Conditions: 150 mM KOAc, 10 mM MgCl2 and 150 mM bicine (pH 8.5), 24 C. Chemical mapping of a 207-nucleotide RNA with 2A3 and DMS. For DMS, 3,191 sequencing reads were counted. For 2A3, 1,352 sequencing reads were counted.
RNA sequence: GGGAACGACUCGAGUAGAGUCGAAAAUGGACUUCUUACAGUUCCUACUUAUCCGGUUUUAACGCUGUUUUAUUGGCGCAAAGGUUUACGGAUAAACAACUAAUAAUUAAACCUUUUGUGUGCGAAAAUUGGACGUUUAGGUUCGCCUAAACGUCAAACCCAUUAGUUACUUCGGUAACUAAUGGGUAAAAGAAACAACAACAACAAC
Reactivity to 2A3 in 0.01 (KOAc 150mM, MgCl2 10mM, bicine 150mM(pH8.5), 24C), signal-to-noise 3, nucleotides 027 to 156: u160g030g020a010c050u070u050c050u140u210a110c170a100g010u050u130c020c000u020a060c040u000u030a000u010c000c000g010g010u010u000u000u080a080a050c040g010c030u050g160u130u120u050u160a140u150u130g060g000c000g010c010a040a020a000g000g000u000u000u000a000c000g010g010a010u040a080a080a030c050a050a020c060u150a050a170u140a260a020u210u110a050a040a000c010c000u030u030u080u060g060u040g020u060g060c090g070a060a020a080a150u140u150g050g010a010c010g010u010u000u000a010g000g020u010u010c090g110c010c000u000a000a000a000c000g000u000c000a000a000
Reactivity to DMS in 0.01 (KOAc 150mM, MgCl2 10mM, bicine 150mM(pH8.5), 24C), signal-to-noise 2, nucleotides 027 to 156: u000g000g030a060c030u000u000c110u000u010a140c150a150g020u000u000c010c020u010a110c100u000u000a000u000c020c030g000g020u030u000u000u000a230a060c010g020c010u010g020u000u000u000u000a160u000u020g020g000c020g000c000a010a070a010g060g020u010u000u000a090c020g000g010a030u000a010a030a180c050a070a130c100u000a110a150u020a130a120u000u000a010a040a030c000c010u000u000u030u000g020u000g000u000g010c000g000a050a030a090a220u010u030g000g020a010c000g010u000u000u000a010g020g030u000u010c300g020c020c000u000a000a010a020c010g010u000c000a010a060